Annotation
The record gives the reactivity of an RNA of 170 nucleotides to 2A3 and DMS. 2A3 adducts were read by reverse transcription with SuperScript II with manganese. For DMS, 42,412 sequencing reads were counted. Reactivities are given for positions 27 through 129. The 2A3 profile rests on 26,674 reads.

RNA sequence: GGGAACGACUCGAGUAGAGUCGAAAAAUUGGGGGGUACACUCGAGGAGUGGAAGGCGGGGAGGCGGGGUUCCCGGGCUUACCUACGGGAACUGCUGGUUUCCCCUUAUGUCCAGUCCCUCUCCCGUGGAGAAUUGACUUCGGUCAAUUCAAAAGAAACAACAACAACAAC
Reactivity to 2A3 in 0.01 (KOAc 150mM, MgCl2 10mM, bicine 150mM(pH8.5), 24C), signal-to-noise 9, nucleotides 027 to 129: a000u220u130g010g000g000g000g000g020u080a010c040a020c030u060c050g170a160g060g010a030g020u070g030g070a070a050g040g020c040g000g010g000g010a020g000g010c050g000g000g000g000u010u000c010c000c010g000g020g000c040u110u130a130c010c030u030a080c020g000g010g020a010a010c010u130g190c010u060g090g050u020u020u020c000c000c000c000u040u160a110u090g040u000c010c000a010g050u020c000c000c010u000c010u000c000c000c010g000u030g020g060a150
Reactivity to DMS in 0.01 (KOAc 150mM, MgCl2 10mM, bicine 150mM(pH8.5), 24C), signal-to-noise 5, nucleotides 027 to 129: a140u030u030g000g020g020g000g040g030u060a080c150a030c060u040c040g000a090g000g000a070g030u000g010g010a050a050g000g000c300g000g010g000g010a000g040g000c030g020g010g000g010u000u000c000c010c030g000g010g010c100u010u010a080c120c070u000a040c030g000g040g000a040a030c000u000g020c020u000g020g030u010u000u000c000c000c000c000u000u010a010u030g000u050c030c000a080g020u040c000c000c050u010c040u010c040c000c020g030u050g000g000a300